[RMDB]
RNA sequence: GGGAACGACUCGAGUAGAGUCGAAAAGAUAUGGACGAGUAUGGCAAUAGUCUACCUGGAGAAGGGAUAUCGGAAACGAUAUCAUUUCGAUGAAAGGUAGAGCUAUUGCCAUACUCGUCCUAAGUCAGUGUAUCAAUAAGUUCGCUUAUUGAUACACAAAAGAAACAACAACAACAAC
Reactivity to DMS in 0.01 (KOAc 150mM, MgCl2 10mM, bicine 150mM(pH8.5), 24C), signal-to-noise 5, nucleotides 027 to 126: g000a040u000a300u010g000g000a010c000g000a020g000u000a010u000g000g010c000a020a020u010a020g010u000c000u000a000c000c000u000g000g000a060g010a020a020g000g000g000a030u000a000u000c010g000g000a150a120a220c010g010a010u000a000u000c000a040u000u000u000c010g000a120u020g000a120a160a010g000g000u000a000g000a060g020c000u000a000u000u000g000c000c000a000u000a000c000u000c000g000u000c000c000u000a010a070g010u010c050a180

An RNA of 177 nucleotides, treated with DMS and read out base by base. DMS (dimethyl sulfate) methylates the pairing face of unpaired adenines and cytosines. The DMS profile rests on 9,999 reads. Conditions: 150 mM KOAc, 10 mM MgCl2 and 150 mM bicine (pH 8.5), 24 C. It was measured as part of the RMDB library TTRINS.